[RMDB]
RNA sequence: GGGAACGACUCGAGUAGAGUCGAAAAUAGAAGCUACAGGAAAUCUCAAACUUUCUUUUCUAGAAAUGACUCUUAAAAAUGACUUGAUUAACUCUUGAGGUUGCCAGGGCUUAUGGCUACCUCUGUGCGACUGAGUAGUAUUCGUACUACUCAGUCGAAAAGAAACAACAACAACAAC
Reactivity to 2A3 in 0.01 (KOAc 150mM, MgCl2 10mM, bicine 150mM(pH8.5), 24C), signal-to-noise 2, nucleotides 027 to 126: u030a010g030a010a000g000c090u120a030c120a050g040g060a050a040a080u070c120u020c100a150a180a120c070u090u020u020c000u030u150u040u040c020u030a070g070a060a150a060u110g020a050c000u030c000u140u160a070a110a090a090a130u280g040a020c020u010u030g010a050u080u130a110a070c000u080c010u050u050g000a010g000g000u010u010g000c000c000a030g080g070g030c120u230u110a080u080g000g060c020u050a000c010c000u020c010u020g020u060g010
Reactivity to DMS in 0.01 (KOAc 150mM, MgCl2 10mM, bicine 150mM(pH8.5), 24C), signal-to-noise 2, nucleotides 027 to 126: u010a030g000a040a070g000c080u020a100c260a050g010g030a050a070a050u010c060u010c170a090a140a160c090u000u000u010c020u000u000u000u010c020u020a030g010a100a090a080u010g000a050c030u000c020u000u000a020a020a070a100a090u000g010a120c030u000u010g000a060u000u000a080a130c100u000c050u000u000g010a000g030g040u010u000g000c000c010a020g020g030g000c170u000u020a060u000g000g010c010u000a030c010c010u000c000u000g010u000g010
The record gives the reactivity of an RNA of 177 nucleotides to 2A3 and DMS. The RNA was probed in 150 mM KOAc, 10 mM MgCl2 and 150 mM bicine (pH 8.5) at 24 C. For 2A3, 1,478 sequencing reads were counted. It was measured as part of the RMDB library OK2TST.